[RMDB]
RNA sequence: GGGAACGACUCGAGUAGAGUCGAAAACGUACGUGGAGACACGUACGACGUGACUUCGGUCACGAAUUGAGGCAACUCCUGCGCCUCACGCGCGAGGCGUCGGUGGUCGGCGAGCCCACGGACGCAAAAACUCGCGCGUACAUAACUAGCAGGAGAAGUGAUUACGCAUGUUCGCAUGCGUAAUCACAAAAGAAACAACAACAACAAC
Reactivity to 2A3 in 0.01 (KOAc 150mM, MgCl2 10mM, bicine 150mM(pH8.5), 24C), signal-to-noise 1, nucleotides 027 to 156: c010g010u000a020c000g000u000g000g000a020g020a080c010a000c000g000u010a000c020g000a020c040g000u000g000a000c010u000u040c300g110g000u020c000a020c020g010a040a090u120u180g000a000g000g010c020a120a290c070u000c000c000u000g000c020g000c010c000u030c000a000c000g030c000g000c000g000a020g010g000c040g000u000c100g180g000u000g010g000u020c000g020g190c120g050a020g000c000c000c000a010c020g110g000a010c000g010c100a000a070a110a040a040c010u020c000g000c000g010c000g000u020a000c000a000u140a010a100c100u110a030g000c000a000g000g040a010g000a030a000